RNA sequence: GGGAACGACUCGAGUAGAGUCGAAAAAAAGAGUGCGUAAUAGCUCACUGGUCGAGUGACUCCGCGCCGAAAAUGUACCGGGGCUAAACGUAUCACCGAAGCUGUGGGUGGACACCAUCAGGUGUCCCCUAAGGCAAGAAUUCGUUCUUGCCUUAGGAAAAGAAACAACAACAACAAC
Reactivity to 2A3 in 0.01 (KOAc 150mM, MgCl2 10mM, bicine 150mM(pH8.5), 24C), signal-to-noise 6, nucleotides 027 to 126: a000a000a000g170a030g020u090g020c040g020u070a100a090u030a240g010c010u000c050a090c120u160g090g040u040c050g050a080g060u050g050a080c030u000c050c040g040c040g040c030c000g070a080a090a030a080u190g030u100a060c030c030g010g000g000g020c030u060a100a100a020c030g030u050a030u100c020a010c040c010g030a030a010g070c060u030g030u070g120g000g030u050g000g010a000c000a000c000c020a060u290c080a060g000g000u000g010u000c000c000
Reactivity to DMS in 0.01 (KOAc 150mM, MgCl2 10mM, bicine 150mM(pH8.5), 24C), signal-to-noise 7, nucleotides 027 to 126: a050a050a040g010a080g030u000g010c030g020u010a080a100u010a120g000c020u000c020a060c070u010g020g000u000c060g000a110g010u000g010a080c090u000c180c100g010c060g020c030c010g000a060a040a080a080u010g010u010a080c060c020g000g010g010g020c060u000a030a090a060c100g010u010a060u000c030a080c040c010g010a060a060g000c060u000g000u000g010g000g010u000g010g000a020c000a000c000c010a140u010c220a100g020g020u000g000u000c000c010

This 177-nucleotide RNA was probed chemically with 2A3 and DMS. 2A3 adducts were read by reverse transcription with SuperScript II with manganese. For 2A3, 9,328 sequencing reads were counted. As a SHAPE reagent, 2A3 marks flexible, mostly unpaired nucleotides at the ribose 2'-OH. It was measured as part of the RMDB library OK2TRN.